Background:
The data come from the RNA Mapping Database (RMDB), library M2PK50. Chemical mapping of a 177-nucleotide RNA with DMS. Reactivities are given for positions 27 through 126. The reactions ran in a buffer of 150 mM KOAc, 10 mM MgCl2 and 150 mM bicine (pH 8.5), at 24 C.

[RMDB]
RNA sequence: GGGAACGACUCGAGUAGAGUCGAAAACACAGAAUCUUCGGAUUCUGUGAAAGGAACAAAAACAUGCAAAAGUUCCAAAAAGCAUGAAGGACAAAACUCCAAAAACACAUCGCUUCGGCGAUGUGAAGCUCAGAAAUUAGUUCGCUAAUUUCUGAGCAAAAGAAACAACAACAACAAC
Reactivity to DMS in 0.01 (KOAc 150mM, MgCl2 10mM, bicine 150mM(pH8.5), 24C), signal-to-noise 1, nucleotides 027 to 126: c010a000c010a000g040a030a000u000c020u020u020c170g040g000a030u020u000c010u000g000u000g000a010a050a160g010g010a040a020c070a000a060a030a060a110c040a050u000g000c010a190a040a110a080g000u000u000c040c010a110a090a110a070a090g000c000a010u000g010a190a120g000g040a050c080a060a040a030a160c220u000c010c000a030a070a050a090a160c010a000c000a000u000c000g000c010u010u000c170g030g000c000g010a000u000g040u000g000a040a080